[RMDB]
RNA sequence: GGGAACGACUCGAGUAGAGUCGAAAAACGACGUGCGUCAGCUCCAGAGUAGCGGGGGUUGGAAAUCCCUCGUGAAUGUGGCAGGCAUCGACUGCCAAGACUAAGUACUCUCCGAGACCGAUAGUGAAUUUUCCACUAACUUCGGUUAGUGGAAAAUAAAAGAAACAACAACAACAAC
Reactivity to DMS in 0.01 (KOAc 150mM, MgCl2 10mM, bicine 150mM(pH8.5), 24C), signal-to-noise 5, nucleotides 027 to 126: a110c110g000a100c090g010u000g010c040g010u010c030a110g010c040u010c020c120a040g000a090g000u010a160g010c000g020g000g000g010g020u010u000g010g010a120a100a100u010c010c010c000u010c020g010u000g010a090a090u040g010u000g010g010c020a040g000g000c080a120u030c120g000a160c010u000g010c000c010a040a040g010a100c100u020a070a060g010u010a030c030u000c010u000c060c100g000a060g010a080c070c010g010a050u010a060g020u010g030a100
Reactivity to 2A3 in 0.01 (KOAc 150mM, MgCl2 10mM, bicine 150mM(pH8.5), 24C), signal-to-noise 6, nucleotides 027 to 126: a000c060g070a030c070g070u150g020c030g010u030c020a020g010c010u010c010c010a020g010a010g070u020a000g000c000g000g000g000g000g010u010u090g090g060a020a050a060u100c010c000c000u000c000g010u020g030a080a070u180g010u030g040g000c020a010g040g000c030a130u100c090g080a090c010u020g000c010c000a030a010g030a010c030u060a070a010g030u050a080c010u000c000u000c030c020g020a030g030a080c030c060g050a080u070a060g160u130g080a060
Source: RMDB libraries RFM100 and RFMREP, as collected in RNAgym. This 177-nucleotide RNA was probed chemically with DMS and 2A3. 2A3 adducts were read by reverse transcription with SuperScript II with manganese. High DMS reactivity at an A or C suggests that its Watson-Crick edge is free. Values cover nucleotides 27 to 126.